[RMDB]
RNA sequence: GGGAACGACUCGAGUAGAGUCGAAAACAUGGGAUCGAUCGAGCGCUAGUAUACGAGCUCUAGGAUCUAUAGCUGAUCUGAUCGGUACGGUACGUACCUAGCAUGCAUGACUAGUCGCACUAGGAUCGCGAUCGGUAGUGUUCGCACUACCGAUCGCAAAAGAAACAACAACAACAAC
Reactivity to DMS in 0.01 (KOAc 150mM, MgCl2 10mM, bicine 150mM(pH8.5), 24C), signal-to-noise 1, nucleotides 027 to 126: c090a110u000g000g030g000a030u000c000g000a080u000c050g020a080g020c020g040c010u010a010g000u000a020u000a060c050g010a080g010c050u000c300u000a160g010g010a000u010c000u000a210u010a090g010c290u000g020a050u010c030u000g030a090u010c080g020g000u010a000c030g000g030u010a110c140g000u000a040c000c010u020a020g000c020a070u000g010c050a030u010g010a050c010u000a000g000u010c020g050c020a130c110u000a210g010g000a000u000c060